[RMDB]
RNA sequence: GGGAACGACUCGAGUAGAGUCGAAAAGAUAUGGAGAGAACUGCGAUAAGUAUCCCAUCGGAAACGAUGGGUACUUUUGACGCAGACUCCUAAGUCAAAGUUCGAAGGCCUUCGGGCCUUCGAACAACACCGAACUAAAGUUCGCUUUAGUUCGGUGAAAAGAAACAACAACAACAAC
Reactivity to 2A3 in 0.01 (KOAc 150mM, MgCl2 10mM, bicine 150mM(pH8.5), 24C), signal-to-noise 2, nucleotides 027 to 126: g020a030u100a060u240g000g000a020g000a030g060a190a130c010u020g020c040g000a050u020a100a020g030u010a090u300c000c040c020a000u000c010g060g080a130a020a040c020g000a020u040g020g010g000u010a010c000u010u000u010u020g080a030c000g000c000a020g040a270c000u000c000c010u000a130a010g030u040c050a210a050a070g000u010u020c000g010a000a000g050g010c030c090u230u240c300g130g040g010c020c020u000u010c010g010a000a000c010a000a000
Reactivity to DMS in 0.01 (KOAc 150mM, MgCl2 10mM, bicine 150mM(pH8.5), 24C), signal-to-noise 3, nucleotides 027 to 126: g010a060u010a300u010g010g000a030g000a140g000a110a130c010u000g000c010g010a170u010a020a010g010u000a010u010c000c000c000a000u000c000g010g010a130a120a180c000g010a020u000g010g010g000u000a000c000u000u000u000u000g010a160c090g000c000a000g000a110c000u000c000c000u000a080a140g010u010c040a090a080a080g000u000u000c000g000a030a030g020g020c000c000u000u010c260g030g050g000c000c000u000u000c010g010a000a000c000a090a150
Structure probing data (2A3 and DMS) for a 177-nucleotide construct.
The 2A3 profile rests on 1,993 reads.
The RNA was probed in 150 mM KOAc, 10 mM MgCl2 and 150 mM bicine (pH 8.5) at 24 C.